RNA sequence: GGGAACGACUCGAGUAGAGUCGAAAAGUCUGCUAGCAGAUCUGCGAUCAGUACGUACCAUGGACGUGGAUCGUCAUGACAUGCCAUGUCAUGGCUAGGAGAUGGUACGCGUACUGGAUCACGUACCCCUGCGCACUAAGUUCGCUUAGUGCGCAGGAAAAGAAACAACAACAACAAC
Reactivity to 2A3 in 0.01 (KOAc 150mM, MgCl2 10mM, bicine 150mM(pH8.5), 24C), signal-to-noise 3, nucleotides 027 to 126: g020u010c010u020g040c120u160a060g060c010a010g020a090u040c060u150g050c050g010a050u040c000a010g000u010a000c020g010u010a020c000c010a020u050g050g040a050c060g100u190g070g130a150u130c030g010u000c010a010u010g000a000c000a030u170g300c130c080a060u070g000u000c000a000u000g000g010c020u010a050g020g070a100g010a010u020g010g000u010a020c030g000c070g040u000a000c010u030g090g040a030u040c020a000c090g040u100a060c020c000
Reactivity to DMS in 0.01 (KOAc 150mM, MgCl2 10mM, bicine 150mM(pH8.5), 24C), signal-to-noise 3, nucleotides 027 to 126: g010u010c030u000g000c050u040a120g030c000a020g000a020u010c070u000g030c040g010a040u000c000a040g020u000a060c040g000u020a020c040c000a050u000g040g020a300c080g000u010g000g010a070u010c200g010u000c010a010u010g010a000c040a100u000g020c300c170a150u010g000u000c010a030u000g000g000c000u000a090g000g020a300g000a030u000g000g010u000a010c050g000c110g040u010a000c020u000g020g020a050u000c030a030c030g000u010a120c040c030